An RNA of 207 nucleotides, treated with 2A3 and read out base by base.
Conditions: 150 mM KOAc, 10 mM MgCl2 and 150 mM bicine (pH 8.5), 24 C.
As a SHAPE reagent, 2A3 marks flexible, mostly unpaired nucleotides at the ribose 2'-OH.
Values are in units of 0.01, from 0 to 300, in steps of 10.
Values cover nucleotides 27 to 156.
RNA sequence: GGGAACGACUCGAGUAGAGUCGAAAAGAGACACAACAAAAAAGGAUAACUUGAGGCCGAUAUCCCUGAUGAAAGUACACACAAAAAUCCUCAAAAAAAUAAUAGCAAACCAAAUGCAGAAGCACAUUAAAAAGUCAAUACACCAGGAUCAAGCAAACUGAUACCGAUAUUUCGAUAUCGGUAUCAGAAAAGAAACAACAACAACAAC
Reactivity to 2A3 in 0.01 (KOAc 150mM, MgCl2 10mM, bicine 150mM(pH8.5), 24C), signal-to-noise 1, nucleotides 027 to 156: g110a000g030a010c090a020c030a060a210c080a000a110a060a040a020a030g050g010a120u070a160a000c010u010u000g030a010g060g000c020c010g000a000u020a060u140c040c000c000u050g040a060u070g020a010a030a000g070u080a070c050a000c000a000c020a010a140a030a050a110u020c000c000u010c040a040a270a000a000a000a040a000u240a060a030u050a030g030c000a010a060a060c010c040a060a130a000u070g020c010a020g040a020a010g000c010a000c000a020u050u100a020a020a020a020a020g030u020c020a030a030u040a030c040a060c060c030a030g040g040a090u230c050a070a000g180c020a000a000a060